Background: Chemical mapping of a 177-nucleotide RNA with DMS and 2A3. Values cover nucleotides 27 to 126.
RNA sequence: GGGAACGACUCGAGUAGAGUCGAAAAGCGGCGGGCGUGGCGGUCAAGGCGAUGGGCGGCCCACCGGCACGGCGCUGCAGCACCAAUGGUCGGCGGCGCUGGAUCGAGGUGCGCGGCUUGAGCGGCGCUCCGACCCAUGGUUCGCCAUGGGUCGGAGAAAAGAAACAACAACAACAAC
Reactivity to DMS in 0.01 (KOAc 150mM, MgCl2 10mM, bicine 150mM(pH8.5), 24C), signal-to-noise 2, nucleotides 027 to 126: g060c020g040g070c020g000g000g000c050g120u000g010g050c030g000g010u000c040a110a060g000g000c040g010a170u040g010g000g000c040g050g000c000c000c090a070c030c000g040g020c100a040c040g020g020c030g000c020u000g000c020a090g030c120a090c000c010a130a220u050g010g010u000c020g000g010c040g070g000c060g000c030u000g000g030a070u020c110g000a190g010g050u000g020c090g000c030g030g010c010u030u020g000a030g000c010g010g010c040g020
Reactivity to 2A3 in 0.01 (KOAc 150mM, MgCl2 10mM, bicine 150mM(pH8.5), 24C), signal-to-noise 4, nucleotides 027 to 126: g030c030g030g000c030g020g050g080c030g020u030g010g080c030g030g000u060c090a070a040g030g000c020g070a100u160g040g070g100c040g040g020c020c000c020a030c000c000g100g020c000a000c020g010g000c010g000c000u010g000c000a010g010c010a030c000c020a030a130u210g070g000u060c030g020g080c010g020g000c030g010c060u050g050g010a090u060c050g020a040g000g030u060g040c040g000c020g000g000c000u020u060g030a030g030c030g050g000c020g000
The reactions ran in a buffer of 150 mM KOAc, 10 mM MgCl2 and 150 mM bicine (pH 8.5), at 24 C.
The 2A3 profile rests on 3,119 reads.